[RMDB]
RNA sequence: GGGAACGACUCGAGUAGAGUCGAAAAGAAAUGAUAUUUGCCGCUCAUUUCAAUGUUUAAACGUCAAAAAAUAGAAUACAAAUACUAUUUACGUCGACCUUCAAAGUAAACACGCCUGUUUAAUUUUUUCAAGAAUAGUGAGCAUCGAUGGGCACCGUCAAACCAUAGAUUUCGAUCUAUGGUUUGAAAAAGAAACAACAACAACAAC
Reactivity to DMS in 0.01 (KOAc 150mM, MgCl2 10mM, bicine 150mM(pH8.5), 24C), signal-to-noise 1, nucleotides 027 to 156: g000a090a040a060u000g000a090u000a070u020u000u010g040c030c090g030c180u000c010a030u000u010u030c020a050a120u000g000u000u000u000a070a070a090c030g040u010c040a000a020a110a080a010a160u000a030g000a110a140u000a300c040a060a080a110u010a180c000u000a020u000u000u010a020c050g010u000c020g010a080c070c030u000u010c040a040a020a120g010u000a010a040a040c010a090c040g040c080c080u000g000u010u000u010a060a020u000u000u000u030u000u000c020a040a100g010a130a070u000a050g020u000g010a010g040c050a040u000c060g010a070u010g010g000g000c010a090c020c060g020
Reactivity to 2A3 in 0.01 (KOAc 150mM, MgCl2 10mM, bicine 150mM(pH8.5), 24C), signal-to-noise 2, nucleotides 027 to 156: g020a000a060a000u090g000a010u050a110u140u090u030g000c020c000g000c020u000c000a000u000u040u020c040a060a060u070g060u000u090u060a100a120a050c030g020u040c060a110a100a080a000a010a050u030a010g030a090a110u190a240c060a010a100a040u110a110c000u020a060u060u040u070a040c060g050u010c020g060a070c020c010u110u110c060a130a150a080g060u110a070a070a080c030a050c060g100c030c030u060g070u030u050u070a010a140u050u180u080u000u090u110c100a100a010g050a090a000u050a050g060u040g020a020g020c010a040u070c030g030a040u030g030g020g040c030a010c000c030g020
Structure probing data (DMS and 2A3) for a 207-nucleotide construct. The reactions ran in a buffer of 150 mM KOAc, 10 mM MgCl2 and 150 mM bicine (pH 8.5), at 24 C. The 2A3 profile rests on 1,092 reads. 2A3 is a SHAPE reagent: it acylates the 2'-hydroxyl of flexible nucleotides of all four kinds. The DMS profile rests on 2,298 reads. For 2A3 the reverse transcriptase was SuperScript II with manganese.